Chemical mapping of a 177-nucleotide RNA with 2A3 and DMS.
For DMS the reverse transcriptase was MarathonRT.
2A3 is a SHAPE reagent: it acylates the 2'-hydroxyl of flexible nucleotides of all four kinds.
For 2A3, 3,298 sequencing reads were counted.
The reactions ran in a buffer of 150 mM KOAc, 10 mM MgCl2 and 150 mM bicine (pH 8.5), at 24 C.
Source: RMDB library OK2TRN, as collected in RNAgym.
2A3 adducts were read by reverse transcription with SuperScript II with manganese.
RNA sequence: GGGAACGACUCGAGUAGAGUCGAAAAUUCAGGGAUAACCUCACUCACCUACAAUAGUGUGCAAUGGCCUUAGCUAAAAGCUCUAGACAACUUGGGUUAUGAGGGGCAUAUUUGUCUGCUGCUAUUGCCAGGCAAUACAAUUCGUUGUAUUGCCUGGAAAAGAAACAACAACAACAAC
Reactivity to 2A3 in 0.01 (KOAc 150mM, MgCl2 10mM, bicine 150mM(pH8.5), 24C), signal-to-noise 3, nucleotides 027 to 126: u080u020c030a030g000g000g010a050u060a180a080c010c000u010c030a050c020u030c000a110c010c010u060a070c030a080a080u030a070g060u070g020u030g070c000a030a080u070g030g000c020c020u060u060a020g020c010u050a090a020a070a010g010c010u000c020u050a030g010a050c050a170a080c090u050u090g050g000g020u060u060a060u110g040a050g040g000g040g000c020a020u090a150u130u150u140g070u010c040u060g020c010u030g000c000u020a030u090u070g020
Reactivity to DMS in 0.01 (KOAc 150mM, MgCl2 10mM, bicine 150mM(pH8.5), 24C), signal-to-noise 3, nucleotides 027 to 126: u000u000c090a060g010g000g010a120u010a060a110c060c010u000c050a090c070u000c070a070c070c020u000a100c120a060a080u010a030g010u000g020u010g020c000a060a080u010g000g000c010c060u000u010a050g000c050u000a060a080a100a090g000c030u000c050u000a060g000a070c150a060a060c060u000u000g000g000g010u000u010a030u020g010a080g010g010g000g000c060a070u010a080u000u020u000g010u000c040u000g020c020u020g000c050u010a040u000u000g010